[RMDB]
RNA sequence: GGGAACGACUCGAGUAGAGUCGAAAAGGAUGGGGCCUGGCAUGCGCACGACGCGGUGCUGGAGAUGCUGAAUCUGCACGACCAGGGCAGGGGCAAGCUAGGGGGAGGGACGGGCAGCGACAGCGGCACGAGAUACGUCUUUCGAGACGUAUCUCGUAAAAGAAACAACAACAACAAC
Reactivity to DMS in 0.01 (KOAc 150mM, MgCl2 10mM, bicine 150mM(pH8.5), 24C), signal-to-noise 2, nucleotides 027 to 126: g020g020a130u000g010g050g000g020c110c000u000g020g010c050a050u000g000c060g040c060a100c180g020a190c110g010c060g000g060u000g040c020u000g010g000a120g000a080u000g000c080u000g020a140a030u010c070u000g000c030a070c070g000a110c040c040a070g010g020g000c100a090g000g000g000g000c270a050a070g010c110u000a070g000g000g040g000g000a150g000g000g040a120c070g010g000g000c060a080g020c040g000a070c070a090g000c020g030g000c090
Reactivity to 2A3 in 0.01 (KOAc 150mM, MgCl2 10mM, bicine 150mM(pH8.5), 24C), signal-to-noise 3, nucleotides 027 to 126: g050g000a080u100g000g020g000g060c000c030u030g010g000c030a040u200g200c040g030c030a080c170g300a060c080g070c020g030g010u020g010c000u020g020g050a100g030a040u100g000c040u050g030a050a090u040c020u060g000c050a040c070g090a070c040c040a030g020g030g000c080a060g000g000g020g000c080a100a020g010c060u200a070g020g000g010g030g000a230g030g000g040a040c070g030g020g000c020a020g000c010g020a020c010a020g010c100g030g000c020